[RMDB]
RNA sequence: GGGAACGACUCGAGUAGAGUCGAAAAGAUAUGGAGUAAGGCCGAAGAACUGUGUAACAAGUGGUCGGAAACGACCACCGCCCACAGGGAGGCUAUCUCCUAAGUCAAAGGACGGUUCGCCGUCCAAGAUGGACCUUAUCUUCGGAUAAGGUCCAUCAAAAGAAACAACAACAACAAC
Reactivity to DMS in 0.01 (KOAc 150mM, MgCl2 10mM, bicine 150mM(pH8.5), 24C), signal-to-noise 2, nucleotides 027 to 126: g000a080u000a300u020g000g000a040g070u000a100a240g000g000c000c000g020a070a170g000a100a210c010u000g010u000g000u000a020a010c120a200a060g000u000g020g000u010c000g060g000a080a120a180c000g000a000c010c010a010c010c050g000c300c120c000a010c000a020g000g000g000a050g030g020c010u010a080u000c000u000c000c000u000a080a120g020u010c060a040a080a250g000g030a010c000g020g010u000u010c270g020c000c000g010u000c000c000a030a010
Reactivity to 2A3 in 0.01 (KOAc 150mM, MgCl2 10mM, bicine 150mM(pH8.5), 24C), signal-to-noise 2, nucleotides 027 to 126: g060a030u100a040u140g020g000a030g010u120a300a300g150g000c050c100g140a180a050g060a060a010c000u010g000u000g040u180a100a160c080a130a090g010u000g010g030u000c000g000g000a070a040a030c000g000a010c000c000a000c010c010g010c000c000c000a010c010a020g000g000g000a030g000g000c000u000a060u070c010u000c000c000u020a150a020g040u010c060a160a070a120g010g000a000c050g000g040u050u090c300g050c160c000g010u000c000c030a010a000